[RMDB]
RNA sequence: GGGAACGACUCGAGUAGAGUCGAAAAUUUACACUGCGGCAAGGCGAGCAUGUGGCGUACGUUUGGUGCGUGUUUCAUAGGCGGUCGCGUACCCGGGCCUUACCAAGGCUGCUACUGCUUAUCGAGGAUUACGUGUGACUUUCGAGUCACACGUAAUAAAAGAAACAACAACAACAAC
Reactivity to DMS in 0.01 (KOAc 150mM, MgCl2 10mM, bicine 150mM(pH8.5), 24C), signal-to-noise 2, nucleotides 027 to 126: u000u010u000a110c100a120c040u000g010c050g000g010c040a090a080g030g000c050g000a110g020c060a070u000g020u000g000g010c040g020u010a020c030g000u000u010u020g000g020u000g000c010g020u000g020u000u010u010c070a080u000a070g020g010c040g000g010u000c070g020c030g020u000a080c030c010c040g000g010g020c010c030u010u020a120c210c190a080a110g010g010c000u010g000c000u000a050c030u010g000c040u000u000a050u010c090g010a130g000g000
Reactivity to 2A3 in 0.01 (KOAc 150mM, MgCl2 10mM, bicine 150mM(pH8.5), 24C), signal-to-noise 1, nucleotides 027 to 126: u000u020u040a050c070a010c060u080g020c000g000g000c020a020a020g070g010c000g020a050g030c010a050u200g090u090g170g000c010g070u100a050c080g030u010u120u130g130g020u000g000c020g060u040g060u080u100u110c130a090u110a000g020g000c020g000g000u050c010g000c020g000u090a080c000c010c050g010g000g000c000c020u030u060a090c060c050a020a000g020g050c060u030g000c000u030a010c000u040g020c070u040u040a010u140c100g040a050g130g020
Annotation: The data come from the RNA Mapping Database (RMDB), library OK2TRN. Structure probing data (DMS and 2A3) for a 177-nucleotide construct. 2A3 adducts were read by reverse transcription with SuperScript II with manganese. Values cover nucleotides 27 to 126.